[RMDB]
RNA sequence: GGGAACGACUCGAGUAGAGUCGAAAAGCUCGGAGACGAGCAAGGCUGACAAAACGCUGUCCCAACCUCCACGUGGUGUCGGCUGGAUAAUGCUGCAUUAUGUUGCAUUUAUCAACUGGGAAGCAAAGCUAAUGACCGUCUUCGGACGGUCAUUAGCAAAAGAAACAACAACAACAAC
Reactivity to 2A3 in 0.01 (KOAc 150mM, MgCl2 10mM, bicine 150mM(pH8.5), 24C), signal-to-noise 3, nucleotides 027 to 126: g000c010u000c000g000g060a070g010a040c020g010a000g000c070a000a060g000g000c000u020g020a020c080a050a030a070a030c220g010c000u040g150u040c000c000c000a000a000c020c000u040c050c050a140c070g070u130g000g010u000g000u010c010g010g000c030u020g000g000a000u010a040a000u020g000c030u000g020c030a100u110u130a140u300g000u000u020g000c000a020u060u000u130a010u010c020a000a000c020u020g000g000g000a030a000g000c010a050a030a000

This 177-nucleotide RNA was probed chemically with 2A3. For 2A3, 1,726 sequencing reads were counted.